This 177-nucleotide RNA was probed chemically with DMS and 2A3. Conditions: 150 mM KOAc, 10 mM MgCl2 and 150 mM bicine (pH 8.5), 24 C. The data come from the RNA Mapping Database (RMDB), library RFMREP. DMS adducts were read by reverse transcription with MarathonRT. For 2A3 the reverse transcriptase was SuperScript II with manganese. The 2A3 profile rests on 3,360 reads.

RNA sequence: GGGAACGACUCGAGUAGAGUCGAAAAUGCGCUAUUCGUAGCGCAAGAUGAAGUGAUGACAGAACCCCGGCUUGAAAGAUGAUAGAGCCGUGUGAGAACUGAUCCAGAGGCACAUUUCGAUGUGCAAUGUACUACUAUCGUUCGCGAUAGUAGUACAAAAAGAAACAACAACAACAAC
Reactivity to DMS in 0.01 (KOAc 150mM, MgCl2 10mM, bicine 150mM(pH8.5), 24C), signal-to-noise 4, nucleotides 027 to 126: u010g030c000g000c000u000a010u020u020c280g030u000a020g000c010g010c000a020a000g010a170u000g010a160a070g020u010g010a160u000g000a120c040a050g010a110a270c020c020c060c000g000g000c000u000u000g010a130a120a110g000a140u010g010a080u010a150g010a020g000c000c010g020u000g020u000g010a090g000a120a140c040u010g000a070u010c020c060a090g000a130g000g000c000a010c000a020u000u000u010c180g010a070u010g020u000g010c020a050a030
Reactivity to 2A3 in 0.01 (KOAc 150mM, MgCl2 10mM, bicine 150mM(pH8.5), 24C), signal-to-noise 4, nucleotides 027 to 126: u030g000c000g010c010u010a030u060u070c210g100u040a000g000c000g020c010a000a020g060a060u170g030a090a030g080u050g120a070u080g020a030c020a040g030a090a090c000c010c000c020g020g000c020u020u030g050a130a120a080g140a180u290g040a090u080a110g050a000g000c000c060g030u090g000u040g040a180g000a060a000c010u000g010a070u030c020c010a050g050a090g170g000c010a000c010a020u100u140u070c200g100a010u010g000u000g020c000a000a040